[RMDB]
An RNA of 177 nucleotides, treated with 2A3 and read out base by base.
2A3 adducts were read by reverse transcription with SuperScript II with manganese.
For 2A3, 326 sequencing reads were counted.
Values cover nucleotides 27 to 126.
RNA sequence: GGGAACGACUCGAGUAGAGUCGAAAACAACAUCAACAACACAAAAAAAAAUCAGUGUCUUCAGCUUGUCAAUCGAAGGCAAUGAUGCGAGCAAGCUGCGCCAUUGCGCCCCCGUGGUGUCCGCAAGCGCCGUGGCAGGAUUCGUCCUGCCACGGCGAAAAGAAACAACAACAACAAC
Reactivity to 2A3 in 0.01 (KOAc 150mM, MgCl2 10mM, bicine 150mM(pH8.5), 24C), signal-to-noise 1, nucleotides 027 to 126: c060a070a070c000a120u300c040a000a120c060a040a040c080a060c240a100a130a040a000a010a000a000a000a000u100c000a000g120u000g060u030c000u030u000c010a040g150c150u230u300g150u030c100a230a140u040c110g000a100a040g010g000c000a000a000u100g000a000u090g090c000g000a000g000c000a020a020g000c000u010g000c000g070c030c000a000u020u020g020c000g030c040c000c000c000c050g070u020g030g000u120g070u040c000c300g000c000a030a030g060